[RMDB]
RNA sequence: GGGAACGACUCGAGUAGAGUCGAAAAUGGCAGAUUCACUGAUUAACGUCUGGAUCACUCUCACAGUUGUGUCCGUGGAGUUUGGAGUGAUAGGUUUCAUGACAUUAUGGAAAGUAGAACUGGACUGGCGGUAAGCCACUUUCGAGUGGCUUACCGCAAAAGAAACAACAACAACAAC
Reactivity to 2A3 in 0.01 (KOAc 150mM, MgCl2 10mM, bicine 150mM(pH8.5), 24C), signal-to-noise 1, nucleotides 027 to 126: u090g100g020c010a030g060a110u050u040c000a020c040u000g040a060u020u130a000a040c000g000u000c010u020g050g000a030u040c010a000c010u050c010u030c010a080c010a200g130u200u150g060u110g000u100c010c050g060u050g070g040a180g010u090u170u050g000g020a120g000u120g040a070u080a080g110g040u000u060u070c050a110u150g030a050c000a010u000u230a020u090g000g070a040a050a050g000u030a070g020a000a000c010u030g050g070a070c020u020g050
Reactivity to DMS in 0.01 (KOAc 150mM, MgCl2 10mM, bicine 150mM(pH8.5), 24C), signal-to-noise 1, nucleotides 027 to 126: u010g050g030c010a050g020a150u010u030c020a040c010u000g020a150u010u000a040a030c090g010u020c010u010g010g000a070u010c020a040c020u000c040u000c130a100c090a080g010u000u010g030u010g030u000c060c080g050u000g000g000a040g010u000u000u020g030g000a070g020u000g010a020u020a020g020g000u000u000u000c070a060u010g000a050c110a050u000u000a040u000g020g000a060a070a040g030u000a090g030a020a060c030u000g000g000a140c050u000g030